[RMDB]
RNA sequence: GGGAACGACUCGAGUAGAGUCGAAAAUUUUGUCUUAAAGCCAUGAUGAAUGGGGUGACUCUGAGGUGACCAUUAAUCGCGUAUAAAAGUAACCUGACUAAAAUGUUUUCAUUGUUUUCUACAGUUAAAGGACUUACACCAGCAUAACACAGCAUUAGCAUUUAAAAUGAUUCGUCAUUUUAAAUGCAAAAGAAACAACAACAACAAC
Reactivity to DMS in 0.01 (KOAc 150mM, MgCl2 10mM, bicine 150mM(pH8.5), 24C), signal-to-noise 2, nucleotides 027 to 156: u000u020u020u010g020u010c060u010u000a060a100a230g010c040c020a050u010g020a170u000g040a120a090u020g010g020g030g020u010g000a080c020u010c070u020g020a110g010g030u000g000a090c030c030a070u000u000a080a090u000c060g050c080g000u020a130u000a070a070a110a170g010u000a120a070c050c020u000g020a110c080u020a110a040a080a110u000g000u000u010u010u000c070a120u000u000g000u000u010u000u000c030u000a070c070a070g010u000u010a030a090a090g010g020a140c030u010u000a040c030a110c060c030a030g010c040a080u000a060a070c050a090c070a080g020c030a070u020u000a130
Reactivity to 2A3 in 0.01 (KOAc 150mM, MgCl2 10mM, bicine 150mM(pH8.5), 24C), signal-to-noise 3, nucleotides 027 to 156: u060u070u020u090g050u050c020u050u100a120a030a000g020c020c000a030u080g010a030u070g040a110a040u080g020g000g000g010u020g020a070c030u000c050u110g070a040g080g000u030g030a020c010c020a030u040u150a110a090u120c040g000c000g070u080a060u040a190a190a030a010g030u030a020a040c030c040u020g040a020c030u100a030a030a070a080u060g020u000u110u060u050c050a010u070u050g050u040u050u050u030c040u070a040c020a020g010u010u070a060a070a060g050g020a020c010u080u060a020c060a030c040c010a020g060c020a030u100a130a040c090a010c030a090g130c020a040u290u300a030